[RMDB]
RNA sequence: GGGAACGACUCGAGUAGAGUCGAAAACGACAAGGGUGUAAAGAUCGCUCUUUUACUCGGCAUGAUACCACCGUUAUUGGGUCAACAGAGUAGUUGCAAAUGACAACAAUGCUCAGGGUUAUGCUCUAAAAGUUCGUACCCUUCGGGGUACGAACAACACAUCGUCCUUCUUCGGAAGGACGAUGUGAAAAGAAACAACAACAACAAC
Reactivity to DMS in 0.01 (KOAc 150mM, MgCl2 10mM, bicine 150mM(pH8.5), 24C), signal-to-noise 1, nucleotides 027 to 156: c070g010a170c240a050a040g000g070g050u000g010u000a120a120a190g000a030u020c020g030c100u010c010u000u000u010u000a020c050u000c000g020g050c030a090u010g020a080u000a100c010c000a030c020c010g060u010u010a040u000u000g000g000g020u000c000a080a110c120a170g010a100g020u010a080g020u010u000g010c010a050a090a250u020g010a100c040a020a020c010a050a060u010g020c010u000c050a040g010g010g030u010u000a080u010g000c030u010c050u000a040a060a080a130g020u010u000c020g060u000a000c010c000c000u000u000c280g090g000g010g040u000a000c010g000a000a020c000a020a090
Reactivity to 2A3 in 0.01 (KOAc 150mM, MgCl2 10mM, bicine 150mM(pH8.5), 24C), signal-to-noise 3, nucleotides 027 to 156: c060g140a010c050a040a030g020g020g010u070g060u150a210a140a050g130a180u210c040g020c060u030c000u010u090u040u080a110c090u030c010g000g000c030a030u100g010a000u060a160c000c020a010c000c010g050u090u110a100u120u200g030g000g010u040c030a040a010c050a040g020a010g020u080a020g020u030u030g000c040a090a180a270u230g060a090c010a030a000c000a070a100u090g010c010u010c050a030g000g000g000u060u070a090u120g020c000u040c020u110a030a110a030a030g000u000u000c010g000u010a010c010c000c000u000u040c190g030g000g000g000u010a000c000g000a000a000c000a000a000

The data come from the RNA Mapping Database (RMDB), library M2RFPK. Structure probing data (DMS and 2A3) for a 207-nucleotide construct. The reactions ran in a buffer of 150 mM KOAc, 10 mM MgCl2 and 150 mM bicine (pH 8.5), at 24 C.